RNA sequence: GGGAACGACUCGAGUAGAGUCGAAAACUUACGGAUGAGUUCGUAGAUGGUCGAGCGUGACAGGCCGCACAGGUGCAUCACUUCCGGCACACGUAAAAAACGCUCCUGCGUGAUGUCCGGCAGCGGCGAUGAAAUAGUCUUUCGAGACUAUUUCAUCAAAAGAAACAACAACAACAAC
Reactivity to DMS in 0.01 (KOAc 150mM, MgCl2 10mM, bicine 150mM(pH8.5), 24C), signal-to-noise 9, nucleotides 027 to 126: c050u000u000a090c070g010g010a080u010g010a100g010u000u000c030g020u000a060g010a110u000g010g010u000c050g010a080g010c060g020u000g010a090c080a110g010g010c020c020g020c050a110c130a080g010g020u000g020c080a080u000c050a070c040u000u000c050c020g000g000c060a060c040a020c020g020u010a000a050a060a060a050a090c070g000c060u000c040c060u000g010c140g000u000g000a070u000g000u000c010c010g000g010c230a060g010c040g010g010c100
Reactivity to 2A3 in 0.01 (KOAc 150mM, MgCl2 10mM, bicine 150mM(pH8.5), 24C), signal-to-noise 6, nucleotides 027 to 126: c020u050u040a040c050g090g040a060u080g050a110g160u050u050c020g020u040a040g010a210u090g070g020u030c030g020a030g030c020g010u010g040a040c030a090g090g030c010c010g000c010a040c020a060g060g010u070g040c030a040u100c020a020c000u080u020c010c000g010g000c010a020c000a010c030g020u050a090a130a060a030a050a030c050g020c050u040c020c020u020g000c000g010u030g040a230u020g060u040c020c000g010g000c010a020g020c000g060g000c040